[RMDB]
RNA sequence: GGGAACGACUCGAGUAGAGUCGAAAAUUAAUGAAGCAAAUCUCCAAACGCCAACGAUGAGCGUUUCGCAAUCGCCGCUUAAGGCUUUUGCCGAGGCUGCAUGAGCCUUGUUACCAAAGAAAAGCCGAAAACCCAAAUGUCUUCGGACAUUUGGGAAGCUUAUGAAUUUGUUCGCAAAUUCAUAAGCAAAAGAAACAACAACAACAAC
Reactivity to DMS in 0.01 (KOAc 150mM, MgCl2 10mM, bicine 150mM(pH8.5), 24C), signal-to-noise 1, nucleotides 027 to 156: u040u000a100a060u000g050a140a160g010c020a070a070a100u000c060u030c060c030a040a100a010c020g050c030c010a050a030c070g020a100u000g000a060g060c020g000u000u000u020c060g050c020a130a020u000c080g000c010c050g020c120u000u010a120a150g050g010c000u010u010u000u020g000c020c080g000a190g020g000c000u020g000c090a040u000g030a130g000c020c010u010u020g000u020u000a170c060c060a050a090a160g000a080a070a050a030g000c050c020g020a080a050a110a200c000c000c010a000a020a010u010g010u000c000u000u010c300g020g000a020c010a020u000u000u000g020g000g010a000a040
Reactivity to 2A3 in 0.01 (KOAc 150mM, MgCl2 10mM, bicine 150mM(pH8.5), 24C), signal-to-noise 2, nucleotides 027 to 156: u110u060a040a060u140g110a110a040g020c020a070a100a120u050c060u050c070c020a030a020a030c000g020c010c040a120a070c170g190a190u140g020a060g040c000g000u010u030u060c040g010c020a050a060u050c050g020c040c070g050c070u120u130a080a040g000g000c000u000u010u010u010g020c000c020g030a020g030g000c030u050g010c040a050u090g060a000g010c000c000u000u000g050u070u130a090c060c040a040a070a030g090a010a070a070a000g020c050c050g060a060a050a040a110c000c000c020a010a000a000u010g000u000c000u010u040c090g060g000a000c000a000u000u000u000g000g000g000a000a000